[RMDB]
RNA sequence: GGGAACGACUCGAGUAGAGUCGAAAAAUUACUGUUACUACUCCUACUACUUAUACUGAGAGAUGAAUUUUAAAAGAUAGCAUAUGCUGGGCAUGGUGGUGGGCACCUGUAGUCCAAGCUACUCAGGCCACCAUCUCGUAUUCGUACGAGAUGGUGGAAAAGAAACAACAACAACAAC
Reactivity to DMS in 0.01 (KOAc 150mM, MgCl2 10mM, bicine 150mM(pH8.5), 24C), signal-to-noise 1, nucleotides 027 to 126: a070u030u030a110c100u020g030u010u000a090c100u000a140c040u000c000c010u020a080c070u020a170c070u010u010a150u000a120c090u000g000a050g010a190g000a040u000g040a050a060u000u000u010u000a020a090a130a150g000a070u000a060g000c020a050u000a100u020g020c050u000g010g000g000c050a060u000g000g000u000g000g020u000g020g010g010c270a010c000c060u000g020u010a060g020u020c090c130a070a070g000c090u000a020c000u010c040a060g030g060
Reactivity to 2A3 in 0.01 (KOAc 150mM, MgCl2 10mM, bicine 150mM(pH8.5), 24C), signal-to-noise 1, nucleotides 027 to 126: a000u090u190a070c030u050g090u140u050a050c040u040a020c010u000c020c000u030a050c020u020a020c030u190u110a040u000a130c010u050g050a000g010a000g010a120u110g060a110a110u080u060u180u290a060a190a000a020g040a060u050a050g000c020a040u100a090u300g000c020u050g080g010g050c030a060u080g010g000u030g000g030u040g030g080g030c000a060c000c000u030g030u060a020g000u020c010c000a000a010g000c000u030a050c010u010c010a010g120g000
An RNA of 177 nucleotides, treated with DMS and 2A3 and read out base by base. For DMS the reverse transcriptase was MarathonRT. It was measured as part of the RMDB library OK2TST. The reactions ran in a buffer of 150 mM KOAc, 10 mM MgCl2 and 150 mM bicine (pH 8.5), at 24 C. 2A3 adducts were read by reverse transcription with SuperScript II with manganese.